[RMDB]
RNA sequence: GGGAACGACUCGAGUAGAGUCGAAAACUAAAAGUUCUAAUGCCGUCUCCAUGCCCAUAUUCGCGGCGUUCGUAGCCUGCGCGGUCGCGCUCGUGGGGCUACUGGUUUGGAGCAUCGUAAAAUGCGCAGCGUCUACGCAUUUCGAUGCGUAGACGCUAAAAGAAACAACAACAACAAC
Reactivity to 2A3 in 0.01 (KOAc 150mM, MgCl2 10mM, bicine 150mM(pH8.5), 24C), signal-to-noise 1, nucleotides 027 to 126: c000u070a050a050a000a140g150u120u040c070u150a050a030u210g050c000c030g000u040c030u000c040c000a010u080g000c060c030c020a090u090a190u100u300c090g030c050g070g000c050g020u010u020c040g000u000a020g000c000c000u120g120c050g020c010g030g060u130c060g030c000g000c030u030c030g000u020g000g030g000g000c000u000a020c070u050g120g000u100u060u080g040g000a050g050c020a070u160c050g150u160a020a050a080a020u210g000c050g000c000
Reactivity to DMS in 0.01 (KOAc 150mM, MgCl2 10mM, bicine 150mM(pH8.5), 24C), signal-to-noise 1, nucleotides 027 to 126: c100u000a090a060a130a080g000u000u000c040u000a070a040u010g010c040c130g010u000c030u010c020c000a050u000g020c060c000c040a200u000a120u020u020c100g000c070g020g000c000g030u000u000c110g000u000a020g020c010c010u000g020c010g040c010g010g010u000c140g020c080g040c010u000c000g010u000g000g000g030g020c010u010a020c020u010g010g000u000u000u000g010g000a100g010c060a070u000c170g000u030a040a050a030a030u000g000c040g020c060